[RMDB]
RNA sequence: GGGAACGACUCGAGUAGAGUCGAAAAAACUACGAACGGGUGCCACUGGUGUAUCGGUUGUCCGAGAGGGCAUGUGCCGAGCAGCUACGCACCACGGGGUAAGAGCUGAAUGCAUCUAAGCUCGAAAUCGCGGUCUAAUAUUCGUAUUAGACCGCGAAAAAGAAACAACAACAACAAC
Reactivity to 2A3 in 0.01 (KOAc 150mM, MgCl2 10mM, bicine 150mM(pH8.5), 24C), signal-to-noise 2, nucleotides 027 to 126: a000a000c010u060a020c000g120a070a000c000g000g000g000u000g000c000c000a110c060u060g000g010u090g000u100a300u000c000g050g010u160u020g000u000c000c000g000a000g010a000g180g000g000c030a030u210g190u240g240c000c020g000a000g000c020a000g020c000u000a000c040g000c000a020c000c020a020c000g050g000g000g040u020a130a000g000a030g000c000u070g070a150a000u240g210c090a080u060c010u070a000a000g000c000u010c000g030a060a030a030
Reactivity to DMS in 0.01 (KOAc 150mM, MgCl2 10mM, bicine 150mM(pH8.5), 24C), signal-to-noise 2, nucleotides 027 to 126: a070a070c120u000a090c010g050a080a290c000g000g000g020u010g000c000c020a090c030u000g000g000u030g000u070a270u000c030g000g030u000u000g000u020c000c000g000a190g000a210g000g000g010c000a060u060g000u060g010c010c010g000a040g000c170a110g000c010u010a080c190g000c000a000c000c000a040c000g040g000g030g010u000a110a020g000a010g000c000u010g040a100a140u040g010c110a020u000c020u030a200a100g030c000u010c000g020a150a100a070